The record gives the reactivity of an RNA of 177 nucleotides to 2A3.
The RNA was probed in 150 mM KOAc, 10 mM MgCl2 and 150 mM bicine (pH 8.5) at 24 C.
[RMDB]
RNA sequence: GGGAACGACUCGAGUAGAGUCGAAAACGGCAUCGCAGAUGAACGCCGACGGGCUGAUCACCGCCGAACUGGUGGCCGAGCUGGCCAAGACGGCCACGCUGGUGCCGCUGGUUCAUCCCGGCGAUGCGCUCCGAGAGCCGUUCGCGGCUCUCGGAGCAAAAGAAACAACAACAACAAC
Reactivity to 2A3 in 0.01 (KOAc 150mM, MgCl2 10mM, bicine 150mM(pH8.5), 24C), signal-to-noise 1, nucleotides 027 to 126: c000g020g000c000a000u000c000g050c060a060g010a110u030g030a060a000c020g030c090c050g020a060c020g030g000g010c160u070g110a070u090c000a010c030c050g060c000c020g040a090a030c030u150g010g000u030g070g000c000c020g030a030g010c020u000g000g000c000c010a060a030g150a110c130g000g000c000c000a030c110g030c030u070g090g030u230g000c000c000g000c000u000g010g000u010u000c000a030u030c070c030c070g020g020c020g000a000u020g050c010